[RMDB]
RNA sequence: GGGAACGACUCGAGUAGAGUCGAAAACUGAGACGCUUCGGCGUCUCAGAAAUGGAACAGAGGCGAAGGAAGCAAGAGCUAUCAUGCCAAUGACCACGUGGAAAACUCAUACGUUCGCGUAUGAGAAGGUUAAUGUGGAGUUCGCUCCACAUUAACCAAAAGAAACAACAACAACAAC
Reactivity to 2A3 in 0.01 (KOAc 150mM, MgCl2 10mM, bicine 150mM(pH8.5), 24C), signal-to-noise 2, nucleotides 027 to 126: c010u020g000a000g000a010c000g050c010u000u030c110g070g010c000g010u020c000u010c000a020g000a000a000a010u050g000g010a160a130c010a000g030a030g000g050c020g120a100a080g170g010a000a040g080c030a130a120g070a050g150c010u040a160u300c020a060u120g030c000c020a020a000u040g030a040c020c000a040c100g020u230g120g060a040a140a000a000c000u020c000a000u000a020c010g020u020u060c270g000c000g030u000a000u060g000a000g030a030a020
Reactivity to DMS in 0.01 (KOAc 150mM, MgCl2 10mM, bicine 150mM(pH8.5), 24C), signal-to-noise 1, nucleotides 027 to 126: c010u020g000a000g000a000c000g020c000u020u010c210g040g030c020g100u000c000u040c000a000g000a030a090a090u020g000g020a110a120c040a010g020a300g000g000c000g040a090a150g000g000a080a010g010c070a150a130g020a100g020c020u000a070u000c080a080u000g020c010c020a010a140u020g010a210c020c030a060c170g000u010g000g010a010a160a060a170c000u000c000a000u000a000c000g000u010u000c200g000c000g040u000a000u050g000a000g000a000a020